An RNA of 177 nucleotides, treated with 2A3 and DMS and read out base by base.
As a SHAPE reagent, 2A3 marks flexible, mostly unpaired nucleotides at the ribose 2'-OH.
RNA sequence: GGGAACGACUCGAGUAGAGUCGAAAAGCCGGCGAGUGAAGACGAACCAUCGGCUGCCGUGUUCUUUUUCCUCUUGGAGGUUGGAGUCCCCUGGGCGCCCCCACACGGCUAGACGCCUCGGCUGGUUUCUGUCUCAUAUAUUCGUAUAUGAGACAGAAAAAGAAACAACAACAACAAC
Reactivity to 2A3 in 0.01 (KOAc 150mM, MgCl2 10mM, bicine 150mM(pH8.5), 24C), signal-to-noise 7, nucleotides 027 to 126: g020c000c000g020g000c040g030a080g020u130g080a080a060g090a080c060g040a060a040c030c010a090u070c020g030g000c030u010g010c010c020g020u040g020u060u100c060u060u100u030u070u040c020c020u060c040u060u100g120g020a060g010g050u070u100g040g010a020g050u050c000c000c000c010u040g010g030g020c010g040c000c010c000c010c000a020c000a000c020g020g000c000u020a030g030a060c020g020c000c010u040c030g060g010c010u010g050g000u000u020
Reactivity to DMS in 0.01 (KOAc 150mM, MgCl2 10mM, bicine 150mM(pH8.5), 24C), signal-to-noise 4, nucleotides 027 to 126: g010c000c000g000g010c050g010a080g010u010g000a100a070g000a140c100g010a110a170c070c080a110u020c030g020g000c030u010g000c020c020g030u020g000u000u010c040u000u010u000u000u010c010c000u010c060u030u050g000g000a080g000g010u000u010g000g010a120g000u000c010c010c040c060u000g000g000g010c090g000c020c020c030c000c030a080c040a070c030g010g000c020u020a040g010a080c060g010c090c000u010c060g010g010c020u000g000g000u000u010
Description
2A3 adducts were read by reverse transcription with SuperScript II with manganese.